An RNA of 207 nucleotides, treated with 2A3 and read out base by base. The RNA was probed in 150 mM KOAc, 10 mM MgCl2 and 150 mM bicine (pH 8.5) at 24 C. Reactivities are given for positions 27 through 156. 2A3 adducts were read by reverse transcription with SuperScript II with manganese.
RNA sequence: GGGAACGACUCGAGUAGAGUCGAAAAGAGCUGUCGUGAGACAGCUCACGAUCCGUGAGGAUCGAAACGGAGGAACCACACAAGCGCGAAAAGAACGCCCUCCGCGGUGAAUCACGAAACCACGUGAGUGGGAGUGAUUCUCCGAAGCUUGGUGGAACCAAGGCAUGUUCUUCGGAACAUGCCUUGGAAAAGAAACAACAACAACAAC
Reactivity to 2A3 in 0.01 (KOAc 150mM, MgCl2 10mM, bicine 150mM(pH8.5), 24C), signal-to-noise 2, nucleotides 027 to 156: g000a000g000c000u000g010u020c020g030u010g050a090g000a030c010a010g010c000u000c000a000c020g000a000u000c000c010g070u070g070a100g000g000a000u010c050g010a130a080a000c010g020g000a010g010g010a030a170c010c000a030c000a010c000a010a000g000c000g000c010g000a000a080a080a140g090a140a070c000g010c000c000c000u000c000c000g000c000g000g000u000g000a010a000u000c010a010c010g090a170a050a060c010c000a010c020g060u130g160a110g000u000g000g020g000a090g010u000g000a000u000u000c010u000c000c000g000a000a000g000c000u000u010g020g000u000g000g000a010a020